[RMDB]
RNA sequence: GGGAACGACUCGAGUAGAGUCGAAAACAUUUAUCAUUGAACUAUAAUUGUUCAUUGAAGUCAUUGAUGCAAACUCCUUGGUCACACACACAUACGGCGCGGAAGGCGUGUUUGCUGACGUUUCCAUAAUAUCAUAUAUCUUCGGAUAUAUGAUAUUAAAAGAAACAACAACAACAAC
Reactivity to DMS in 0.01 (KOAc 150mM, MgCl2 10mM, bicine 150mM(pH8.5), 24C), signal-to-noise 7, nucleotides 027 to 126: c040a070u000u000u010a120u010c010a020u000u000g010a010a010c010u000a130u010a120a130u020u010g010u010u000c000a020u000u000g020a030a120g000u010c140a110u000u000g000a060u000g000c050a070a070a120c090u000c020c030u010u010g010g010u000c020a070c040a050c050a050c070a050c090a050u010a080c080g020g010c050g000c030g010g010a090a140g010g000c110g020u000g010u000u000u000g010c050u000g010a060c180g000u000u000u000c000c010a280u000
Reactivity to 2A3 in 0.01 (KOAc 150mM, MgCl2 10mM, bicine 150mM(pH8.5), 24C), signal-to-noise 7, nucleotides 027 to 126: c010a010u140u150u170a130u060c010a010u010u020g010a010a000c010u050a060u170a300a230u250u120g000u020u000c000a010u010u030g030a050a010g070u080c060a080u040u220g040a040u080g020c040a050a030a090c020u010c000c000u030u050g050g010u060c000a020c000a000c000a000c000a000c000a060u080a210c070g030g000c010g010c020g100g050a040a030g050g000c030g010u030g060u040u050u050g010c020u020g030a020c040g000u000u000u000c000c000a010u020
The record gives the reactivity of an RNA of 177 nucleotides to DMS and 2A3. It was measured as part of the RMDB library RFMREP. The reactions ran in a buffer of 150 mM KOAc, 10 mM MgCl2 and 150 mM bicine (pH 8.5), at 24 C. Reactivities are given for positions 27 through 126. In probing experiments dimethyl sulfate is read out at A N1 and C N3, which are open when not base-paired. For 2A3, 10,578 sequencing reads were counted. DMS adducts were read by reverse transcription with MarathonRT.